[RMDB]
Structure probing data (2A3 and DMS) for a 177-nucleotide construct.
The data come from the RNA Mapping Database (RMDB), library OK1LIB.
The RNA was probed in 150 mM KOAc, 10 mM MgCl2 and 150 mM bicine (pH 8.5) at 24 C.
RNA sequence: GGGAACGACUCGAGUAGAGUCGAAAAUAGAGUUAACGAAAAAAUUAAUGAAAUCGACGAUAUAGAUAUGAUAAAGAAAGGUGGGUAGCAAUAUGAAAAAUACAUUCCUUAUUUGUGAUGAAUGUCAACAUGUCCAUGAGUUCGCUCAUGGACAUGUAAAAGAAACAACAACAACAAC
Reactivity to 2A3 in 0.01 (KOAc 150mM, MgCl2 10mM, bicine 150mM(pH8.5), 24C), signal-to-noise 3, nucleotides 027 to 126: u140a010g070a000g050u080u060a060a040c060g150a060a000a020a000a000a260u300u270a190a120u210g070a170a080a060u030c070g050a040c100g000a000u040a000u040a210g040a030u040a050u260g000a010u080a080a040a020g200a020a040a000g040g020u080g050g020g000u010a010g000c040a010a000u090a110u260g170a040a000a120a000a000u180a010c010a020u010u100c000c010u110u140a210u110u130u100g170u010g020a090u000g040a070a090u050g000u020c000a000
Reactivity to DMS in 0.01 (KOAc 150mM, MgCl2 10mM, bicine 150mM(pH8.5), 24C), signal-to-noise 3, nucleotides 027 to 126: u010a110g030a230g010u000u000a020a030c110g000a020a080a080a110a110a110u000u020a060a070u000g000a090a060a040u010c070g010a050c130g010a110u000a040u000a130g020a080u000a060u030g000a090u000a020a070a120g000a050a040a080g020g000u010g010g000g010u000a040g000c050a010a090u000a030u000g010a010a020a030a060a070u020a020c050a050u010u000c000c000u000u010a180u010u020u020g030u000g000a030u010g020a060a060u000g010u010c140a040